[RMDB]
RNA sequence: GGGAACGACUCGAGUAGAGUCGAAAAGAUAUGGAGCAUGUGGAGCAUCGAUCGUGUCGGUCGGAAACGACCGCACGGGAGCUCCGCAUGCUCCUAAGUCAAAUCGGUGGUCUUCGGACCACCGAAACUAUGACUCUUUCUUCGGAAAGAGUCAUAGAAAAGAAACAACAACAACAAC
Reactivity to 2A3 in 0.01 (KOAc 150mM, MgCl2 10mM, bicine 150mM(pH8.5), 24C), signal-to-noise 1, nucleotides 027 to 126: g030a000u060a020u090g010g000a000g000c030a000u020g000u010g010g010a010g000c040a230u300c080g110a090u040c020g030u010g210u180c070g050g000u000c010g020g000a060a040a010c020g000a000c050c000g010c000a000c000g000g000g020a010g000c000u000c000c000g010c000a000u010g000c000u030c010c000u000a000a000g010u010c000a000a010a050u020c000g000g030u000g020g030u010c020u040u090c300g140g000a010c000c000a000c000c000g010a000a000a000
Reactivity to DMS in 0.01 (KOAc 150mM, MgCl2 10mM, bicine 150mM(pH8.5), 24C), signal-to-noise 2, nucleotides 027 to 126: g010a050u010a300u010g000g010a020g010c000a000u000g050u000g000g000a020g010c000a300u000c240g010a040u000c000g010u000g000u030c030g010g000u000c000g010g000a040a050a120c010g020a020c000c000g040c010a000c000g010g010g000a040g020c000u000c000c000g000c000a010u000g010c000u000c000c000u000a010a060g000u000c020a090a140a180u000c020g020g040u000g000g010u000c000u010u030c260g020g000a010c000c000a000c010c000g000a000a010a110

Conditions: 150 mM KOAc, 10 mM MgCl2 and 150 mM bicine (pH 8.5), 24 C. Structure probing data (2A3 and DMS) for a 177-nucleotide construct. High DMS reactivity at an A or C suggests that its Watson-Crick edge is free. The data come from the RNA Mapping Database (RMDB), library TTRDES. For 2A3, 3,184 sequencing reads were counted. For DMS, 2,880 sequencing reads were counted.